[RMDB]
RNA sequence: GGGAACGACUCGAGUAGAGUCGAAAAGAAGGCGCUUUGUAUGCGUUAGGCAAACUGGAAGACUCUGGUAGCUAUCCUAGAAUUAAAGCUCUAAGCUCUAGAUCCAAUCCUGAAGUAGUACUAGCUGCCUACCCUAAUGGUUCGCCAUUAGGGUAGGAAAAGAAACAACAACAACAAC
Reactivity to DMS in 0.01 (KOAc 150mM, MgCl2 10mM, bicine 150mM(pH8.5), 24C), signal-to-noise 3, nucleotides 027 to 126: g010a150a130g000g010c050g000c020u000u030u020g040u000a070u020g000c020g000u010u010a010g000g000c160a060a060a030c120u000g000g000a100a140g010a110c160u000c030u000g010g010u020a000g010c020u010a090u020c100c090u010a030g000a040a120u010u020a070a060a110g000c010u000c020u010a070a060g000c000u000c000u000a010g000a120u000c080c020a030a080u000c040c000u010g000a090a020g010u030a040g000u020a040c020u000a030g000c080u010g010
Reactivity to 2A3 in 0.01 (KOAc 150mM, MgCl2 10mM, bicine 150mM(pH8.5), 24C), signal-to-noise 8, nucleotides 027 to 126: g100a020a040g060g020c040g020c090u140u200u180g070u100a040u130g020c040g020u020u050a030g020g000c070a090a050a030c040u030g030g020a060a020g070a120c050u010c010u050g040g020u130a000g010c020u040a050u140c030c040u040a040g060a050a030u190u190a170a070a010g020c010u000c010u030a030a030g000c000u000c010u030a030g020a080u020c010c000a020a040u010c010c020u050g030a070a010g030u120a010g030u030a060c030u040a040g050c030u040g020